[RMDB]
RNA sequence: GGGAACGACUCGAGUAGAGUCGAAAAACUUAUGAGUGAGAACAUGUGGUGUUUGGUUUUCUCUUCCUAUGUUAGUUUGCUGAGGAUGAUGGUUUCCAGCUUCAUCCAUGUCCCUGCAAAAGAUAUGAACUCAUUCUUUUUUAUGGCUGCAUAGUAAGUCAUACCUAGGAUUCGUCCUAGGUAUGACAAAAGAAACAACAACAACAAC
Reactivity to DMS in 0.01 (KOAc 150mM, MgCl2 10mM, bicine 150mM(pH8.5), 24C), signal-to-noise 1, nucleotides 027 to 156: a050c050u010u010a060u000g010a070g050u010g010a120g000a110a120c070a050u000g020u000g040g030u000g000u010u000u010g030g000u000u000u000u000c010u000c050u000u010c030c010u010a090u000g010u000u010a100g030u000u000u000g010c070u010g000a120g030g040a050u010g010a070u010g040g000u000u000u000c030c070a120g010c040u000u000c030a100u000c010c020a040u000g010u010c070c000c000u010g020c110a050a040a080a100g020a080u010a060u000g020a070a100c070u000c020a090u000u000c010u000u000u000u020u000u030a100u020g020g020c040u000g010c010a080u010a070g030u000a140a210
Reactivity to 2A3 in 0.01 (KOAc 150mM, MgCl2 10mM, bicine 150mM(pH8.5), 24C), signal-to-noise 4, nucleotides 027 to 156: a000c100u180u160a070u140g050a040g040u010g020a050g020a060a030c030a110u110g040u030g090g000u030g080u050u030u060g040g020u030u040u080u050c040u040c000u070u060c010c010u050a040u030g040u050u090a080g020u010u060u110g030c040u050g080a110g060g020a020u140g010a010u060g070g090u070u080u080c060c030a020g010c030u080u100c030a060u030c000c010a020u040g020u000c020c000c000u000g010c010a000a040a000a040g050a020u110a020u220g080a080a050c020u020c110a050u080u040c030u040u080u010u030u070u130a090u210g010g030c010u020g010c040a040u020a050g040u090a170a010